Source: RMDB library OK2TRN, as collected in RNAgym. An RNA of 177 nucleotides, treated with 2A3 and DMS and read out base by base. The RNA was probed in 150 mM KOAc, 10 mM MgCl2 and 150 mM bicine (pH 8.5) at 24 C. Reactivities are given for positions 27 through 126. For DMS, 1,763 sequencing reads were counted.

RNA sequence: GGGAACGACUCGAGUAGAGUCGAAAACACUUCGGCUAUUUCCGCGACGACAAUCGCGCGCUGUGGCCGCUCGGCGCGGCGUGGCUGCGCGAGCAGUGAGUGGCCGCUCGCGCUCGCGCGGGUGCGACGACUCGGGAUUAUUCGUAAUCCCGAGUCGAAAAGAAACAACAACAACAAC
Reactivity to 2A3 in 0.01 (KOAc 150mM, MgCl2 10mM, bicine 150mM(pH8.5), 24C), signal-to-noise 2, nucleotides 027 to 126: c050a000c040u080u080c040g040g000c040u100a150u130u170u090c030c010g040c030g060a280c020g020a020c220a200a180u180c090g000c000g000c000g010c120u010g000u020g000g000c000c000g000c010u010c010g080g010c000g010c000g020g050c100g200u180g200g000c040u040g000c000g040c020g010a060g040c020a040g080u160g100a020g010u030g010g020c010c020g020c010u010c000g010c000g000c020u000c010g000c000g000c000g000g020g000u050g020c020g040a060
Reactivity to DMS in 0.01 (KOAc 150mM, MgCl2 10mM, bicine 150mM(pH8.5), 24C), signal-to-noise 2, nucleotides 027 to 126: c120a140c120u000u010c060g030g020c050u000a130u000u020u000c000c000g000c020g000a130c030g000a100c300a070a110u000c230g000c010g020c020g010c130u020g010u000g010g010c000c000g010c040u010c030g010g000c050g000c020g000g000c020g040u000g020g000c010u010g030c000g030c020g010a080g030c160a130g010u010g000a030g040u000g010g000c020c020g020c010u000c010g010c000g030c020u000c010g020c030g000c020g000g010g030u000g000c040g040a170